Conditions: 150 mM KOAc, 10 mM MgCl2 and 150 mM bicine (pH 8.5), 24 C. An RNA of 177 nucleotides, treated with DMS and 2A3 and read out base by base. The DMS profile rests on 3,560 reads. Reactivities are given for positions 27 through 126. 2A3 adducts were read by reverse transcription with SuperScript II with manganese.
RNA sequence: GGGAACGACUCGAGUAGAGUCGAAAAGGUUCCGUCUUCGGACGGAACCAAACAUAGUAUACCCUGUAGCAUGUAUACUAUGAUAUACCGUAAUGCAACGGAAAAUGCCUAGUUUCGACUAGGCAAACUUCGGUAAAAAGUUCGCUUUUUACCGAAGAAAAGAAACAACAACAACAAC
Reactivity to DMS in 0.01 (KOAc 150mM, MgCl2 10mM, bicine 150mM(pH8.5), 24C), signal-to-noise 3, nucleotides 027 to 126: g000g000u000u000c000c000g010u000c010u010u020c190g010g000a020c010g000g000a000a000c000c000a020a090a090c010a010u000a010g000u000a010u000a000c000c160c180u010g020u000a110g000c080a080u010g000u000a010u000a000c020u000a010u000g020a090u010a100u000a100c010c010g000u010a090a060u010g010c080a110a050c010g010g010a110a080a130a110u000g000c000c000u000a010g010u000u000u020c190g000a030c000u000a000g000g020c000a010a010a030
Reactivity to 2A3 in 0.01 (KOAc 150mM, MgCl2 10mM, bicine 150mM(pH8.5), 24C), signal-to-noise 2, nucleotides 027 to 126: g000g000u000u000c000c000g010u000c000u030u060c170g060g000a000c000g000g010a000a000c000c000a000a010a000c000a000u010a000g020u010a000u010a020c040c050c100u150g110u090a050g030c080a060u120g010u000a000u000a000c010u000a000u010g010a010u020a020u030a110c000c010g020u020a070a080u150g040c050a040a020c000g030g090a060a010a040a080u090g010c000c000u000a000g010u000u060u100c110g030a040c010u010a000g000g000c000a000a010a010
It was measured as part of the RMDB library M2PK50.